[RMDB]
RNA sequence: GGGAACGACUCGAGUAGAGUCGAAAAUUAAGCAGAGAGAAUUAAACAAAUGACAUCCUACUCAAAUCUUGGGACUGGGCAUAAGUCAACGGGAGGUUGAUUCCAUGAAGUAGAGGUGAUACGAAUCCACACAGCACUAGUUCGCUAGUGCUGUGUGAAAAGAAACAACAACAACAAC
Reactivity to DMS in 0.01 (KOAc 150mM, MgCl2 10mM, bicine 150mM(pH8.5), 24C), signal-to-noise 2, nucleotides 027 to 126: u000u010a060a070g050c090a120g010a160g010a110g010a070a060u000u000a070a090a120c140a060a090a070u000g010a100c100a050u000c040c010u000a050c040u010c030a100a070a100u010c030u010u000g010g030g010a030c080u010g000g000g040c060a050u010a060a060g010u000c040a030a060c110g000g000g020a070g000g000u000u000g010a060u000u000c030c040a060u000g000a050a050g030u000a060g030a060g010g020u000g010a130u000a050c100g010a100a100u000c070
Reactivity to 2A3 in 0.01 (KOAc 150mM, MgCl2 10mM, bicine 150mM(pH8.5), 24C), signal-to-noise 2, nucleotides 027 to 126: u060u020a030a000g030c090a020g060a000g010a010g090a070a120u150u060a280a090a060c070a060a100a060u080g040a030c010a080u020c000c030u030a040c030u010c040a130a180a130u070c050u000u010g030g010g050a070c030u060g010g050g070c070a080u070a240a010g040u010c030a010a090c030g030g070g020a070g020g040u030u020g010a080u050u000c000c010a060u120g070a000a060g020u040a040g050a010g010g040u030g010a020u060a100c040g040a040a020u090c020